[RMDB]
RNA sequence: GGGAACGACUCGAGUAGAGUCGAAAAUUCGCGUAAUUUCACGCGUGGUGCAUAGAAUAGAGUAGGAUAGCGUUGCCGGUUGAUCACGUUAUUUUUGUUUUUGGUCACAGGAAGUAACAUACGCAUGUGAUUAGUAGCUGUUCGCAGCUACUAAUCAAAAAGAAACAACAACAACAAC
Reactivity to 2A3 in 0.01 (KOAc 150mM, MgCl2 10mM, bicine 150mM(pH8.5), 24C), signal-to-noise 3, nucleotides 027 to 126: u060u010c030g000c010g030u030a070a190u090u120u130c110a040c050g030c000g040u010g040g000u070g010c030a060u050a150g070a150a030u070a030g100a030g110u120a020g060g050a080u040a070g020c000g040u050u070g050c030c000g080g060u100u120g010a060u030c020a020c060g000u020u030a060u040u080u010u050u040g100u030u090u020u080u050g040g000u040c010a010c010a020g030g020a060a010g020u090a100a000c030a050u130a080c010g040c040a030u120g040
Reactivity to DMS in 0.01 (KOAc 150mM, MgCl2 10mM, bicine 150mM(pH8.5), 24C), signal-to-noise 5, nucleotides 027 to 126: u010u000c050g010c020g010u010a070a110u000u000u000c130a040c050g010c030g040u000g010g010u000g020c040a090u010a060g000a070a070u000a080g010a090g010u000a080g010g000a040u000a040g010c040g020u000u010g020c070c030g000g010u000u010g010a100u000c070a050c140g010u000u000a030u000u000u010u010u010g010u000u000u000u010u000g000g000u010c040a030c050a120g010g010a040a070g010u000a050a080c090a110u010a060c070g010c070a100u000g020